Chemical mapping of a 177-nucleotide RNA with DMS and 2A3. High 2A3 reactivity points to a flexible backbone, as in loops and unpaired stretches. The data come from the RNA Mapping Database (RMDB), library OK2TST. Conditions: 150 mM KOAc, 10 mM MgCl2 and 150 mM bicine (pH 8.5), 24 C.

[RMDB]
RNA sequence: GGGAACGACUCGAGUAGAGUCGAAAAAGCUCUCUGGCGAGUGCAGGAACUGCGUGAACUUGCUCGCGUCCGUUGGUCCGCCCACGAUUGUCUUCUCGCCUUUCUCGGGCGCGCCGCCGUGCCAGCCCCUUUAACCGUUCUUCGGAACGGUUAAAGGAAAAGAAACAACAACAACAAC
Reactivity to DMS in 0.01 (KOAc 150mM, MgCl2 10mM, bicine 150mM(pH8.5), 24C), signal-to-noise 3, nucleotides 027 to 126: a070g030c050u010c030u000c020u000g020g010c030g010a040g020u020g000c030a060g010g000a080a120c060u010g040c060g000u000g010a080a150c120u000u000g000c020u010c040g000c040g020u010c010c070g010u000u010g020g000u000c270c010g020c020c000c010a110c180g010a080u010u000g020u000c060u000u000c130u000c100g000c110c040u000u000u000c020u000c190g040g000g010c010g010c230g020c000c020g000c050c040g010u000g000c000c040a070g000c110c060
Reactivity to 2A3 in 0.01 (KOAc 150mM, MgCl2 10mM, bicine 150mM(pH8.5), 24C), signal-to-noise 2, nucleotides 027 to 126: a000g070c050u030c010u030c020u070g010g010c020g020a020g020u120g070c070a020g080g020a070a030c090u190g050c090g050u060g060a080a080c060u090u190g010c000u040c020g030c010g010u050c020c020g030u020u090g020g010u010c040c030g010c030c000c010a040c050g040a030u000u050g020u050c020u160u050c080u130c050g050c010c030u030u020u000c050u010c010g000g000g020c010g010c010g010c020c000g030c020c030g030u080g000c010c010a030g050c040c040

For DMS the reverse transcriptase was MarathonRT. 2A3 adducts were read by reverse transcription with SuperScript II with manganese.